[RMDB]
RNA sequence: GGGAACGACUCGAGUAGAGUCGAAAAGCUCACGCUGCUCGCGCAUUGCGGCUCGGCGUUGCCGGGCGUGCUGAGCGGCGCGAAGGACGGCACACGUCUGCUGUCGCCGACCGGGCACAGUCUGGUACGUGCACUGGGUAUUCGUACCCAGUGCACGAAAAGAAACAACAACAACAAC
Reactivity to DMS in 0.01 (KOAc 150mM, MgCl2 10mM, bicine 150mM(pH8.5), 24C), signal-to-noise 2, nucleotides 027 to 126: g030c060u000c030a090c010g000c010u000g030c020u010c010g020c110g000c050a130u020u010g020c200g020g010c020u000c000g020g010c030g020u010u000g020c030c000g000g000g000c000g020u000g000c040u020g000a050g020c000g000g010c000g030c040g010a060a080g000g000a090c020g030g000c040a110c070a100c080g000u000c060u010g030c080u000g020u010c160g010c030c000g020a060c070c060g000g010g000c050a090c060a090g000u010c040u010g010g010u010a140
Reactivity to 2A3 in 0.01 (KOAc 150mM, MgCl2 10mM, bicine 150mM(pH8.5), 24C), signal-to-noise 2, nucleotides 027 to 126: g060c000u000c000a000c010g000c020u010g010c000u010c010g000c020g000c070a080u010u300g160c110g070g000c040u010c030g020g000c170g240u100u190g030c020c010g000g000g000c010g020u040g000c040u070g010a010g000c000g000g000c020g000c000g020a010a040g070g010a010c000g020g000c050a010c030a030c100g080u000c130u070g060c070u040g050u060c070g010c030c010g030a070c040c030g030g000g000c070a080c010a110g060u000c040u010g010g010u090a040

The record gives the reactivity of an RNA of 177 nucleotides to DMS and 2A3. DMS adducts were read by reverse transcription with MarathonRT. The 2A3 profile rests on 2,398 reads.